[RMDB]
RNA sequence: GGGAACGACUCGAGUAGAGUCGAAAAGAUAUGGAUUAAGCAGUACCUGCUCGACGAAGUCGGAAACGACAGAGAGCCUGUACUUCCCUUAAUCCUAAGUCAAAAGGUCUGCCUUCGGGCAGACCAACUUGUUGUCCUUGUUCGCAAGGACAACAAGAAAAGAAACAACAACAACAAC
Reactivity to DMS in 0.01 (KOAc 150mM, MgCl2 10mM, bicine 150mM(pH8.5), 24C), signal-to-noise 2, nucleotides 027 to 126: g010a090u000a300u000g000g010a010u020u000a000a000g070c130a020g020u000a010c010c030u010g020c020u000c020g000a200c180g000a150a180g000u000c010g010g000a100a080a150c000g010a010c000a060g000a100g000a000g000c000c050u020g020u000a010c030u000u010c130c180c000u010u010a010a020u000c000c000u020a030a090g000u000c060a060a090a120a120g000g030u000c000u000g000c030c000u010u010c170g040g040g010c000a000g020a000c000c000a000a010
Reactivity to 2A3 in 0.01 (KOAc 150mM, MgCl2 10mM, bicine 150mM(pH8.5), 24C), signal-to-noise 1, nucleotides 027 to 126: g060a010u090a070u150g020g010a000u050u020a110a030g040c200a020g180u010a010c010c020u010g030c000u000c000g300a300c080g060a140a020g010u000c000g020g040a100a010a050c010g030a000c030a020g040a000g000a010g010c000c000u010g000u000a000c000u040u030c010c020c040u000u040a000a000u000c020c000u010a130a030g060u000c030a010a000a030a270g010g000u010c000u000g020c050c000u100u140c300g060g030g000c000a000g000a000c010c000a000a010

Chemical mapping of a 177-nucleotide RNA with DMS and 2A3. The DMS profile rests on 1,041 reads. The reactions ran in a buffer of 150 mM KOAc, 10 mM MgCl2 and 150 mM bicine (pH 8.5), at 24 C. Reactivities are given for positions 27 through 126.